[RMDB]
Chemical mapping of a 207-nucleotide RNA with DMS and 2A3. The RNA was probed in 150 mM KOAc, 10 mM MgCl2 and 150 mM bicine (pH 8.5) at 24 C. For DMS the reverse transcriptase was MarathonRT. High 2A3 reactivity points to a flexible backbone, as in loops and unpaired stretches. Source: RMDB library M2RFPK, as collected in RNAgym.
RNA sequence: GGGAACGACUCGAGUAGAGUCGAAAAACCGGAGGCCGACAAUCCAGGGAACCGGAUGUCAUCACGUUGUGGCAGUACCAGAUGGCAUCUUAAAUCCGAUCUGCAAAUAAGCAUGUAGAAAGCUGAUAAAAUCACACACACUUCGGUGUGUGUGAAACAUUAUUAGACCCUUCGGGGUCUAAUAAUGAAAAGAAACAACAACAACAAC
Reactivity to DMS in 0.01 (KOAc 150mM, MgCl2 10mM, bicine 150mM(pH8.5), 24C), signal-to-noise 3, nucleotides 027 to 156: a120c010c030g030g010a100g020g030c040c020g020a090c040a080a070u010c060c030a080g020g010g010a090a080c070c120g020g000a030u010g030u000c010a030u000c010a130c140g000u000u020g030u000g000g020c050a130g030u000a300c030c020a160g010a040u000g010g000c000a030u000c010u000u000a080a100a180u000c040c040g020a080u000c020u000g000c020a050a050a130u000a070a120g000c050a070u010g010u000a060g010a070a090a120g000c030u000g000a100u020a040a050a110a120u000c000a000c000a000c000a000c000a020c000u010u000c290g060g010u010g010u000g040u000g000u000g000a000a030a090
Reactivity to 2A3 in 0.01 (KOAc 150mM, MgCl2 10mM, bicine 150mM(pH8.5), 24C), signal-to-noise 3, nucleotides 027 to 156: a000c010c000g020g030a050g000g060c070c050g050a050c080a070a070u100c070c070a060g000g010g040a040a050c040c050g010g020a000u010g010u020c010a010u000c000a000c190g100u160u150g060u110g120g000c090a060g060u120a080c030c030a020g000a000u000g000g000c000a000u010c010u000u070a040a090a020u040c030c000g000a090u020c010u040g010c020a050a030a110u100a140a060g020c030a020u040g010u020a040g080a160a090a010g040c060u020g030a020u130a070a120a010a030u020c000a000c000a000c010a000c000a000c010u050u060c190g080g000u000g000u000g000u000g000u000g000a000a000a000